The record gives the reactivity of an RNA of 207 nucleotides to DMS and 2A3. The 2A3 profile rests on 3,614 reads.
RNA sequence: GGGAACGACUCGAGUAGAGUCGAAAAAGUGGUUGCCGAUCAGCACCGACCAAGAGGAGGAUUUCGACAGCCAGUCGACCAAACUCCAGAUUCGCUGGAAGGGCGAUUGGGUCGCAACGCAACCUGAGAGCGCCGUCCGAAUCCGAGGCUGAACAUGCCAAUCAUAGUGUUUCGACACUAUGAUUGGAAAAGAAACAACAACAACAAC
Reactivity to DMS in 0.01 (KOAc 150mM, MgCl2 10mM, bicine 150mM(pH8.5), 24C), signal-to-noise 3, nucleotides 027 to 156: a120g040u000g010g040u000u000g040c030c030g000a130u000c050a090g040c040a170c050c010g010a180c050c060a080a190g000a160g000g010a170g020g010a200u000u000u000c070g010a070c000a190g020c030c060a070g030u010c020g010a030c070c020a040a040a080c070u000c010c000a070g010a220u010u000c120g020c030u020g020g030a080a240g000g010g020c020g010a100u020u000g000g000g000u010c010g050c040a110a100c130g030c000a020a110c010c020u000g000a080g010a140g000c010g010c000c030g030u010c000c030g000a080a060u020c040c000g030a110g010g030c030u010g030a020a090c050a200u010g020
Reactivity to 2A3 in 0.01 (KOAc 150mM, MgCl2 10mM, bicine 150mM(pH8.5), 24C), signal-to-noise 5, nucleotides 027 to 156: a000g140u100g000g010u050u030g010c020c020g040a100u060c040a010g020c030a070c060c020g070a050c030c070a070a030g020a060g060g020a020g010g030a030u060u090u030c010g010a020c010a040g150c090c010a020g010u000c000g010a200c040c000a140a140a060c030u010c010c000a010g020a210u240u150c100g050c100u020g020g040a070a050g050g010g000c010g000a010u010u040g030g010g010u060c030g010c030a040a060c060g010c030a040a060c020c000u070g030a120g000a020g070c060g010c010c080g060u000c010c040g040a020a020u020c030c020g020a040g020g040c040u040g020a010a070c050a080u180g040

DMS adducts were read by reverse transcription with MarathonRT. For DMS, 4,323 sequencing reads were counted.